[RMDB]
RNA sequence: GGGAACGACUCGAGUAGAGUCGAAAAAGCAUCUCAACGGACUACUGAUGAGGAAGCGUCGUAUUCUCCUCAUAAGCCAUGCCAGAUGUUAAGUGUCAGCAUGACGACUGCUAGAAGUCCUACACAGCCCUCAGCAAAAUUUCGAUUUUGCUGAGGGAAAAGAAACAACAACAACAAC
Reactivity to DMS in 0.01 (KOAc 150mM, MgCl2 10mM, bicine 150mM(pH8.5), 24C), signal-to-noise 4, nucleotides 027 to 126: a070g020c130a070u000c010u000c160a100a150c150g010g010a090c020u010a150c140u000g010a040u010g000a010g000g000a030a030g000c120g020u040c190g010u030a120u050u040c040u000c000c000u000c010a020u010a030a150g000c030c020a010u010g020c190c180a120g020a020u000g000u020u020a080a100g000u030g010u000c040a190g000c010a010u010g010a060c050g020a110c150u000g010c060u030a050g010a080a050g000u020c000c000u000a090c170a050c240a140g000
Reactivity to 2A3 in 0.01 (KOAc 150mM, MgCl2 10mM, bicine 150mM(pH8.5), 24C), signal-to-noise 7, nucleotides 027 to 126: a010g080c040a060u030c010u020c040a070a060c070g000g020a020c020u090a020c020u160g060a040u010g000a010g020g050a110a050g080c020g170u130c020g000u120a160u150u100c030u000c020c000u000c000a020u030a070a030g000c020c000a010u030g000c000c010a060g020a010u000g040u160u130a190a080g110u070g030u100c020a010g020c010a030u050g020a020c030g050a060c030u060g010c010u050a030g030a060a010g040u000c000c010u030a020c050a010c010a030g050
This 177-nucleotide RNA was probed chemically with DMS and 2A3. Values cover nucleotides 27 to 126. Conditions: 150 mM KOAc, 10 mM MgCl2 and 150 mM bicine (pH 8.5), 24 C.